[RMDB]
RNA sequence: GGGAACGACUCGAGUAGAGUCGAAAAGGGAUAAGAGAGUACUCUUAUCCCCACGUCGUUGGUGACAACGACGAUUAUCCGGUGGCCACCCGCUCGGGCCACCGUUACUCCACUCCACUCCUUCGGGACUGGUUUGGAGGAACAUAACAGAGCUAAAUAAUUUACUGGUAUUCGUACCAGUAAAUUAAAAAGAAACAACAACAACAAC
Reactivity to DMS in 0.01 (KOAc 150mM, MgCl2 10mM, bicine 150mM(pH8.5), 24C), signal-to-noise 1, nucleotides 027 to 156: g000g020g030a000u000a010a010g000a060g040a300g040u000a130c030u030c000u020u000a050u000c010c020c000c000a010c010g060u000c010g000u000u060g020g040u020g000a240c010a040a040c000g020a010c010g010a070u000u000a130u000c040c000g100g050u000g020g030c010c000a060c010c000c210g020c070u000c000g000g000g000c020c000a000c010c000g030u000u000a110c000u000c010c010a050c040u010c000c000a020c070u010c000c010u010u000c300g030g030g020a020c020u010g010g020u000u010u010g000g020a000g020g000a060a070c050a140u000a060a080c090a110g030a080g020c020u020a080a120a170
Reactivity to 2A3 in 0.01 (KOAc 150mM, MgCl2 10mM, bicine 150mM(pH8.5), 24C), signal-to-noise 3, nucleotides 027 to 156: g000g010g000a000u010a000a000g010a000g020a030g210u230a210c010u000c000u000u000a000u010c000c000c000c000a030c010g000u000c000g000u000u000g020g050u060g040a030c000a000a000c010g000a000c000g000a000u070u090a070u180c060c000g010g000u000g000g010c000c000a020c030c080c070g000c000u000c010g000g010g000c000c000a000c000c000g000u010u030a000c000u000c000c000a000c000u000c000c000a010c010u010c020c010u030u080c230g040g000g000a000c010u010g010g000u000u010u010g000g000a000g000g010a000a040c030a020u300a110a020c010a030g000a000g000c010u030a030a090a080
Structure probing data (DMS and 2A3) for a 207-nucleotide construct. It was measured as part of the RMDB library OK3TST. The RNA was probed in 150 mM KOAc, 10 mM MgCl2 and 150 mM bicine (pH 8.5) at 24 C. For 2A3, 2,454 sequencing reads were counted. For DMS the reverse transcriptase was MarathonRT.